Overview: Source: RMDB library TTRDEL, as collected in RNAgym. An RNA of 177 nucleotides, treated with DMS and 2A3 and read out base by base.

RNA sequence: GGGAACGACUCGAGUAGAGUCGAAAAGAUAUGGACCUCGUUAGACAUGCUCGCUCGGAAACGAGGAGCAACAGCUAACAGGUCCUAAGUCAAAACCGUAGAUUGAGCUUCGGCUCAAUCUACGGAAUCACCUAUUAUGGUUCGCCAUAAUAGGUGAAAAAGAAACAACAACAACAAC
Reactivity to DMS in 0.01 (KOAc 150mM, MgCl2 10mM, bicine 150mM(pH8.5), 24C), signal-to-noise 7, nucleotides 027 to 126: g000a020u000a280u000g000g000a010c000c000u000c300g010u000u000a000g000a080c090a260u000g000c000u000c000g020c010u000c000g010g000a050a050a150c000g000a010g010g000a010g010c000a010a040c200a120g000c000u000a000a010c000a010g000g010u000c000c000u000a000a050g000u010c020a110a110a120a170c000c000g010u000a000g000a010u000u000g000a020g010c010u000u010c220g020g000c000u000c000a000a000u000c000u000a000c000g010g000a020a030
Reactivity to 2A3 in 0.01 (KOAc 150mM, MgCl2 10mM, bicine 150mM(pH8.5), 24C), signal-to-noise 5, nucleotides 027 to 126: g010a010u030a020u090g010g000a010c000c000u040c100g000u010u010a030g040a160c060a070u040g000c000u010c170g300c050u000c010g020g000a030a040a030c000g000a000g000g010a000g000c000a000a030c070a020g060c000u000a000a010c000a000g010g000u000c000c000u000a010a000g020u000c010a010a010a110a160c000c000g000u010a000g000a010u000u010g010a000g000c010u060u140c300g070g000c000u000c000a000a000u000c000u000a000c000g000g010a000a020
For 2A3 the reverse transcriptase was SuperScript II with manganese. The reactions ran in a buffer of 150 mM KOAc, 10 mM MgCl2 and 150 mM bicine (pH 8.5), at 24 C.